Source information: An RNA of 177 nucleotides, treated with DMS and 2A3 and read out base by base. It was measured as part of the RMDB libraries RFM100 and RFMREP. The RNA was probed in 150 mM KOAc, 10 mM MgCl2 and 150 mM bicine (pH 8.5) at 24 C.

RNA sequence: GGGAACGACUCGAGUAGAGUCGAAAAGUUUGCCUACACACACCCUAAUCGCAACAUCAGGGUUGCGGCACGCCGGAAAAACGACACGGAACGUCAGGAAGGGGUCAAUGGCCGUUACGCUAAUUCACUGCUCUUAAGUAUUCGUACUUAAGAGCAGAAAAGAAACAACAACAACAAC
Reactivity to DMS in 0.01 (KOAc 150mM, MgCl2 10mM, bicine 150mM(pH8.5), 24C), signal-to-noise 7, nucleotides 027 to 126: g010u010u000u020g010c020c010u010a110c160a100c090a070c100a050c020c010c010u010a090a100u010c070g000c080a060a050c100a100u020c180a070g010g000g030u010u000g000c050g000g020c100a040c090g000c020c010g010g010a050a040a050a070a080c100g000a050c090a080c050g000g000a060a050c090g000u010c050a080g000g010a120a110g000g000g000g010u020c060a070a060u010g000g000c030c030g010u010u020a070c100g010c050u000a060a070u020u000c100a180
Reactivity to 2A3 in 0.01 (KOAc 150mM, MgCl2 10mM, bicine 150mM(pH8.5), 24C), signal-to-noise 8, nucleotides 027 to 126: g030u040u050u070g050c010c020u080a040c070a000c020a010c000a030c060c000c020u040a050a090u090c060g010c080a020a050c010a130u170c070a080g160g050g000u010u040g010c000g010g000c010a020c040g020c010c010g060g030a050a070a020a020a010c050g050a010c020a020c070g060g020a130a040c030g020u020c030a030g050g080a060a060g030g020g000g000u020c020a020a090u050g050g000c010c010g030u050u060a030c050g010c060u070a070a080u060u100c060a030